[RMDB]
RNA sequence: GGGAACGACUCGAGUAGAGUCGAAAACUCACUAUAAGCACGGUGAUCAGCCAGUUGAGGCCAAUGAUGAAUCGGACCUUCUCGAAGAAUAUGAACACCGUGACCAUCACCAUGGCCAGCGCGAAGAUGAUAUGGUCGGAUUCGUCCGACCAUAUCAAAAAGAAACAACAACAACAAC
Reactivity to DMS in 0.01 (KOAc 150mM, MgCl2 10mM, bicine 150mM(pH8.5), 24C), signal-to-noise 3, nucleotides 027 to 126: c050u000c020a140c150u000a090u010a110a140g010c020a050c080g020g000u000g040a080u000c030a070g000c050c040a190g010u000u000g010a080g000g030c000c040a100a040u010g000a100u000g010a150a020u000c050g010g020a080c080c060u000u000c050u020c040g010a080a100g010a130a110u010a150u000g010a020a070c040a040c020c010g000u000g030a050c100c030a010u010c060a060c050c090a030u000g000g020c000c010a020g000c050g040c020g010a060a080g010a120
Reactivity to 2A3 in 0.01 (KOAc 150mM, MgCl2 10mM, bicine 150mM(pH8.5), 24C), signal-to-noise 2, nucleotides 027 to 126: c010u030c020a030c040u160a070u070a300a080g080c040a020c040g020g000u020g010a100u000c000a010g050c000c070a040g040u080u050g060a010g020g020c000c000a030a040u060g030a050u120g020a040a050u060c030g070g010a270c010c000u130u080c080u030c070g150a110a070g030a220a160u180a150u130g020a060a000c000a000c000c000g000u000g010a000c000c000a030u070c010a000c100c010a050u060g030g000c000c000a020g000c080g000c020g110a030a040g030a090